[RMDB]
RNA sequence: GGGAACGACUCGAGUAGAGUCGAAAAUGAUGGAACACCGACAGCAGCAGGUGCUCGUCCGGCGCAAGCGUGACGAGCGCGAACGUCGCGAGCGGGCCGCGCGCCAGGUCGAACGGCGUGUCGAGCACCAGCAUAAUACUUUCGAGUAUUAUGCUGGAAAAGAAACAACAACAACAAC
Reactivity to DMS in 0.01 (KOAc 150mM, MgCl2 10mM, bicine 150mM(pH8.5), 24C), signal-to-noise 9, nucleotides 027 to 126: u010g010a100u010g010g000a080a070c070a110c060c020g010a080c080a090g010c060a080g020c060a090g010g020u000g010c010u000c000g020u000c040c050g010g000c010g010c130a050a300g010c010g020u010g010a090c130g000a190g000c010g010c020g000a120a090c050g010u000c020g020c060g000a070g010c030g000g000g010c010c030g010c070g010c030g010c010c020a100g020g010u000c160g010a090a130c100g010g000c010g010u000g000u010c030g000a090g010c100a200
Reactivity to 2A3 in 0.01 (KOAc 150mM, MgCl2 10mM, bicine 150mM(pH8.5), 24C), signal-to-noise 9, nucleotides 027 to 126: u110g030a030u100g030g080a070a030c030a030c060c030g060a040c020a050g050c020a010g000c020a030g090g070u070g040c010u000c010g020u010c020c020g040g000c020g000c050a080a060g020c010g080u100g020a050c060g030a010g000c000g000c010g010a040a020c020g040u030c000g000c030g020a030g040c020g010g040g000c000c010g010c010g000c010g000c010c020a080g030g130u120c060g050a070a040c040g010g000c020g000u030g060u110c020g010a010g020c020a040

Background
Chemical mapping of a 177-nucleotide RNA with DMS and 2A3. Source: RMDB library OK2TRN, as collected in RNAgym. Reactivities are given for positions 27 through 126. The RNA was probed in 150 mM KOAc, 10 mM MgCl2 and 150 mM bicine (pH 8.5) at 24 C. The DMS profile rests on 32,778 reads.